Source: RMDB library OK3TST, as collected in RNAgym. Chemical mapping of a 207-nucleotide RNA with DMS and 2A3. In probing experiments dimethyl sulfate is read out at A N1 and C N3, which are open when not base-paired. For DMS the reverse transcriptase was MarathonRT. The RNA was probed in 150 mM KOAc, 10 mM MgCl2 and 150 mM bicine (pH 8.5) at 24 C.

RNA sequence: GGGAACGACUCGAGUAGAGUCGAAAAUGAGACUCAUUUCAAGCAUGAUCUCCACCAGAAAGCCUUUCCUAACUCUUGCCAUUCUACGCAGUUUGAAUUUGAUAUACUCUACCUUCGUGUUCACAAUCACAGUGCUUAUCGCUAUUAGGGAGCUCAAGAGUAUAUAGCCCUUCGGGGCUAUAUACUCAAAAGAAACAACAACAACAAC
Reactivity to DMS in 0.01 (KOAc 150mM, MgCl2 10mM, bicine 150mM(pH8.5), 24C), signal-to-noise 1, nucleotides 027 to 156: u000g020a100g010a000c060u010c030a080u020u000u020c070a070a220g000c100a090u030g010a040u000c030u000c030c030a220c020c060a200g030a120a100a100g020c020c000u000u000u010c010c020u020a060a050c030u000c020u000u000g070c050c030a120u000u000c030u000a120c080g010c080a090g030u000u010u000g020a060a080u010u000u010g020a080u010a050u000a060c040u000c030u000a030c060c020u000u000c020g000u010g000u000u000c030a070c070a060a110u000c030a080c060a060g010u010g000c020u000u010a060u010c090g000c030u000a090u000u000a090g000g030g020a150g020c000u000c030a040a300
Reactivity to 2A3 in 0.01 (KOAc 150mM, MgCl2 10mM, bicine 150mM(pH8.5), 24C), signal-to-noise 2, nucleotides 027 to 156: u080g000a020g010a020c050u020c010a040u020u110u130c080a070a040g020c040a070u040g000a020u040c000u000c000c020a090c000c020a050g090a110a100a030g000c010c000u000u010u050c010c010u010a030a030c000u010c010u040u000g020c010c000a080u110u020c020u050a040c020g000c060a030g020u040u070u060g050a030a060u000u050u070g040a000u010a020u000a090c020u000c020u030a040c010c010u080u080c020g050u010g020u110u060c030a030c030a110a070u080c030a000c010a090g040u070g020c010u070u020a070u130c040g000c030u000a050u040u040a020g040g020g030a010g100c080u190c030a050a010